The data come from the RNA Mapping Database (RMDB), library OK3TST. An RNA of 207 nucleotides, treated with 2A3 and read out base by base. 2A3 adducts were read by reverse transcription with SuperScript II with manganese.
RNA sequence: GGGAACGACUCGAGUAGAGUCGAAAAGGGCGAAAAUGUUGAGCGACAGUCUCACGAUAGACAUUUGGGUCAGUUGUUCUUCGAUAAUGGCUCGAAUGAUAUUGCAACUCCCGGCCUGAGCGGGAAACGGGCUGAGGAUAGGGAAGAUGUCUGAGUCCUCCACGUGAACAUUCGUGUUCACGUGGAGAAAAGAAACAACAACAACAAC
Reactivity to 2A3 in 0.01 (KOAc 150mM, MgCl2 10mM, bicine 150mM(pH8.5), 24C), signal-to-noise 1, nucleotides 027 to 156: g010g030g000c050g030a060a040a050a020u170g040u130u050g000a040g010c030g050a060c080a090g040u000c000u000c010a040c010g020a030u070a010g090a060c020a000u050u050u040g000g000g000u040c040a050g020u020u030g070u150u010c040u080u070c020g090a060u090a280a100u070g010g030c030u000c010g000a020a000u080g030a010u000a030u080u110g030c060a090a070c030u030c000c000c000g010g040c000c010u010g010a050g030c120g000g060g000a000a000a100c010g050g000g000c010u020g030a130g020g010a000u100a040g000g000g010a010a050g010a030u040g000u050c000u020g010a020g040u090c010